[RMDB]
RNA sequence: GGGAACGACUCGAGUAGAGUCGAAAAGAUUGCGUUCGCGCAAUCAAAAAGAUAUGGAGGCAUUGACGCAACAGCACCAUCGGUGAUCGGAAACGAUCACCGAGUGGUGACAUGCGUUUGUGCCUCCUAAGUCAAAAAACAGAGGUUCGCCUCUGAAGACAUAAAAUAAGUUCGCUUAUUUUAUGUCAAAAGAAACAACAACAACAAC
Reactivity to DMS in 0.01 (KOAc 150mM, MgCl2 10mM, bicine 150mM(pH8.5), 24C), signal-to-noise 2, nucleotides 027 to 156: g000a020u000u000g000c000g020u000u020c200g000c040g010c020a010a020u000c000a060a040a070a130a120g010a150u000a300u000g000g000a020g020g010c000a030u000u000g000a020c010g010c000a000a090c080a200g020c000a010c000c000a040u000c000g000g000u010g000a010u000c020g010g020a160a150a260c010g020a020u000c000a010c000c000g000a000g010u010g060g000u000g000a030c060a300u000g000c000g020u010u010u000g040u000g000c010c000u000c000c000u000a010a060g010u010c010a010a080a110a130a070a110c020a020g000a030g030g010u000u000c180g020c010c000u000c000u000g010a060a190
Reactivity to 2A3 in 0.01 (KOAc 150mM, MgCl2 10mM, bicine 150mM(pH8.5), 24C), signal-to-noise 5, nucleotides 027 to 156: g010a000u000u000g010c010g040u050u100c250g010c010g000c120a000a010u010c010a030a040a020a040a000g060a040u080a040u090g010g000a010g000g000c000a000u010u040g010a000c000g000c010a010a070c040a220g040c000a010c000c000a010u010c000g000g000u000g000a000u000c010g010g030a060a050a060c010g000a000u010c000a000c000c020g000a000g010u040g000g000u000g030a000c000a010u030g000c000g010u000u000u010g000u000g010c010c000u000c000c000u000a000a000g000u000c000a010a010a010a010a010a040c020a000g040a040g030g010u070u080c170g120c050c000u000c000u000g010a030a010
This 207-nucleotide RNA was probed chemically with DMS and 2A3.
Reactivities are rounded to 0.1 and cut off at 0 and 3.
The DMS profile rests on 6,135 reads.